[RMDB]
RNA sequence: GGGAACGACUCGAGUAGAGUCGAAAAGGACGCUGCUUGCAUGGUCGGGGAUGGCGAUAAUAUACGCUGAAUGGAAUCCAGCUAAGUACCCGAUUGCAUGACCAUUACCGCAAAGAAGAACACAACGCUUACCCAGCUAGUUCGCUAGCUGGGUAAGAAAAGAAACAACAACAACAAC
Reactivity to DMS in 0.01 (KOAc 150mM, MgCl2 10mM, bicine 150mM(pH8.5), 24C), signal-to-noise 3, nucleotides 027 to 126: g000g010a040c110g000c030u020g020c020u000u000g030c160a050u030g020g010u010c030g010g000g020g020a110u010g010g000c040g050a200u050a140a140u020a140u010a050c050g030c000u020g010a030a030u020g000g010a080a120u000c070c050a010g000c010u000a010a120g000u000a120c020c010c000g030a090u040u020g000c050a040u000g000a090c060c030a020u000u010a200c030c050g040c090a030a100a040g020a160a060g010a020a040c130a110c110a100a110c200g000
Reactivity to 2A3 in 0.01 (KOAc 150mM, MgCl2 10mM, bicine 150mM(pH8.5), 24C), signal-to-noise 5, nucleotides 027 to 126: g060g010a040c030g020c060u100g010c000u070u070g020c010a020u050g030g000u030c010g000g010g010g030a060u100g020g020c030g060a010u060a170a060u150a060u000a070c030g000c030u040g070a090a070u110g060g070a040a020u040c050c020a020g010c020u060a100a030g020u040a080c000c000c010g020a030u020u080g010c030a040u030g030a020c040c020a020u000u090a070c020c040g030c040a070a090a000g120a040a010g040a070a030c080a010c030a100a060c020g000

Structure probing data (DMS and 2A3) for a 177-nucleotide construct. 2A3 adducts were read by reverse transcription with SuperScript II with manganese. Source: RMDB libraries RFM100 and RFMREP, as collected in RNAgym. The RNA was probed in 150 mM KOAc, 10 mM MgCl2 and 150 mM bicine (pH 8.5) at 24 C.